Notes:
An RNA of 177 nucleotides, treated with 2A3 and DMS and read out base by base. For 2A3, 1,799 sequencing reads were counted. For 2A3 the reverse transcriptase was SuperScript II with manganese. It was measured as part of the RMDB library OK1LIB. DMS adducts were read by reverse transcription with MarathonRT. The reactions ran in a buffer of 150 mM KOAc, 10 mM MgCl2 and 150 mM bicine (pH 8.5), at 24 C.
RNA sequence: GGGAACGACUCGAGUAGAGUCGAAAACGCAUGCUAAUCUGCAGGCUCGUUAGCAUGUACUCCGCAAUGUCCGUAACAAAACUGCAGGUGCACAGACCAGCCAGCACACGUCAGUGUCAAGAGACGCAUCAGCAUGACUCUUCGGAGUCAUGCUGAUAAAAGAAACAACAACAACAAC
Reactivity to 2A3 in 0.01 (KOAc 150mM, MgCl2 10mM, bicine 150mM(pH8.5), 24C), signal-to-noise 3, nucleotides 027 to 126: c110g000c000a010u020g000c010u030a060a000u060c040u120g000c020a030g060g020c050u030c030g060u010u020a000g030c000a010u030g010u020a050c030u020c040c000g010c100a060a050u100g040u060c060c000g120u130a090a060c020a100a100a080a030c010u070g000c020a050g030g050u090g010c040a040c010a070g020a060c030c010a000g040c040c010a020g000c030a010c010a000c030g070u040c010a030g000u000g060u130c090a130a030g040a010g000a040c020g000c050
Reactivity to DMS in 0.01 (KOAc 150mM, MgCl2 10mM, bicine 150mM(pH8.5), 24C), signal-to-noise 1, nucleotides 027 to 126: c130g080c000a000u020g000c010u020a000a040u000c060u000g000c040a040g030g000c020u000c020g110u000u000a010g000c110a010u000g000u000a240c070u000c000c000g000c060a230a070u020g000u000c000c000g020u010a150a060c120a100a040a040a170c020u030g020c000a070g020g000u000g020c000a110c060a050g000a050c000c070a180g000c160c090a060g000c000a000c050a060c140g040u000c060a070g000u040g000u020c090a000a020g060a100g000a090c060g000c300